[RMDB]
Chemical mapping of a 177-nucleotide RNA with DMS.
DMS adducts were read by reverse transcription with MarathonRT.
The RNA was probed in 150 mM KOAc, 10 mM MgCl2 and 150 mM bicine (pH 8.5) at 24 C.
RNA sequence: GGGAACGACUCGAGUAGAGUCGAAAAUUUUUAGAUUCUUUCUUGAUUUUUUACCAAUCGCCUGAUGAAAAUACCUUCCAGAGCAGAGAACAACAGUAGAAGUAUGCUGAAAAAGUUAGUAUGAGAACAUAACAUACUCGUUCGCGAGUAUGUUAUGAAAAGAAACAACAACAACAAC
Reactivity to DMS in 0.01 (KOAc 150mM, MgCl2 10mM, bicine 150mM(pH8.5), 24C), signal-to-noise 1, nucleotides 027 to 126: u000u000u000u000u060a210g020a090u010u000c090u020u010u010c000u000u010g020a030u000u000u030u010u000u000a150c040c010a130a080u000c090g010c060c040u000g020a090u010g000a080a050a040a050u030a060c060c060u000u000c040c060a060g010a090g000c070a090g010a080g010a040a030c080a040a090c040a070g020u000a090g010a130a070g040u010a040u000g000c040u000g010a020a090a070a060a050g000u010u010a050g000u010a060u000g000a100g000a070a120